[RMDB]
Structure probing data (2A3 and DMS) for a 207-nucleotide construct. Conditions: 150 mM KOAc, 10 mM MgCl2 and 150 mM bicine (pH 8.5), 24 C. 2A3 adducts were read by reverse transcription with SuperScript II with manganese.
RNA sequence: GGGAACGACUCGAGUAGAGUCGAAAAGCGUGCUCCUGCUUUGCAUCGCCCAUGUGCCAAGUUAGGGGCUCAACUUUAGUGGGCUACGCUGUCUAGUCUCCGCCUGAGGCUAGCUGAAGAAGACAAUCAGGCUGACCUGUGAGAAAGCCGGUUACGGGAUUUGUUGUACGUUCGCGUACAACAAAUCAAAAGAAACAACAACAACAAC
Reactivity to 2A3 in 0.01 (KOAc 150mM, MgCl2 10mM, bicine 150mM(pH8.5), 24C), signal-to-noise 3, nucleotides 027 to 156: g160c110g060u130g020c010u010c010c000u010g010c000u000u000u020g000c000a000u010c000g000c020c000c010a020u030g000u000g000c010c010a110a010g010u200u220a030g230g010g030g070c060u060c030a020a020c000u080u110u070a010g010u010g020g000g000c020u010a010c020g000c010u030g060u170c000u000a000g000u000c010u020c010c020g030c010c020u010g000a010g000g010c000u000a000g020c010u000g000a000a000g030a010a010g150a010c110a020a080u070c020a000g000g000c000u010g010a020c000c010u030g010u080g020a180g100a170a080a050g050c050c010g010g030u010u040a080c050g060g070
Reactivity to DMS in 0.01 (KOAc 150mM, MgCl2 10mM, bicine 150mM(pH8.5), 24C), signal-to-noise 1, nucleotides 027 to 156: g020c060g010u000g000c010u010c030c020u000g010c030u000u000u000g000c020a010u000c170g000c040c090c050a110u000g020u000g020c000c110a040a020g050u000u010a080g050g000g020g000c010u000c040a030a060c190u000u020u010a040g060u010g040g010g000c020u000a100c040g020c020u010g000u010c010u010a050g030u010c010u010c030c030g000c080c050u000g000a060g020g010c030u000a010g040c000u020g000a030a060g000a130a060g000a120c080a070a140u010c020a120g010g000c030u000g020a160c050c020u000g060u000g000a150g000a090a080a130g010c040c050g030g010u000u000a110c060g030g010